[RMDB]
RNA sequence: GGGAACGACUCGAGUAGAGUCGAAAACUUACUUAAAUGAGGCACCAUCAUGGUAUAAAUAUUCUUUGGAGAGUGGUCUUGUGUGUUUAUAUCUGUAUUUAAUUUAUCGAUGGAUUACUCGGUCGUUUACUGUUAAACAGACCGUCGGCAGUGAAUACUACUGGCUAAAUUUCGAUUUAGCCAGUAGAAAAGAAACAACAACAACAAC
Reactivity to DMS in 0.01 (KOAc 150mM, MgCl2 10mM, bicine 150mM(pH8.5), 24C), signal-to-noise 1, nucleotides 027 to 156: c010u000u000a050c090u020u000a080a090a180u000g020a100g030g020c080a110c030c020a040u010c050a040u000g010g000u000a060u000a040a070a100u000a080u020u010c030u000u000u020g010g010a130g000a100g070u000g010g020u000c020u000u010g010u010g020u010g000u010u010u010a040u000a040u010c040u020g010u000a100u010u000u000a060a100u010u020u000a140u010c030g000a040u010g010g020a240u010u000a050c000u000c000g020g040u010c010g020u000u000u000a090c070u010g010u010u020a100a060a110c060a140g020a070c060c040g030u010c060g010g040c040a110g000u000g020a110a120u010a130
Reactivity to 2A3 in 0.01 (KOAc 150mM, MgCl2 10mM, bicine 150mM(pH8.5), 24C), signal-to-noise 2, nucleotides 027 to 156: c000u090u120a010c000u030u050a050a130a090u050g020a050g090g000c030a060c020c000a030u020c000a000u070g040g010u060a030u040a070a030a030u070a140u080u150c120u140u150u070g010g000a010g020a020g060u050g000g030u000c030u040u020g000u000g000u000g050u100u070u000a130u000a030u000c020u000g050u030a100u020u070u060a170a300u020u070u050a020u010c010g010a020u010g000g020a080u110u000a000c000u000c020g000g000u000c010g000u010u000u010a160c010u000g000u020u060a080a060a000c020a010g040a030c020c000g070u060c010g060g050c000a000g000u110g300a000a300u300a080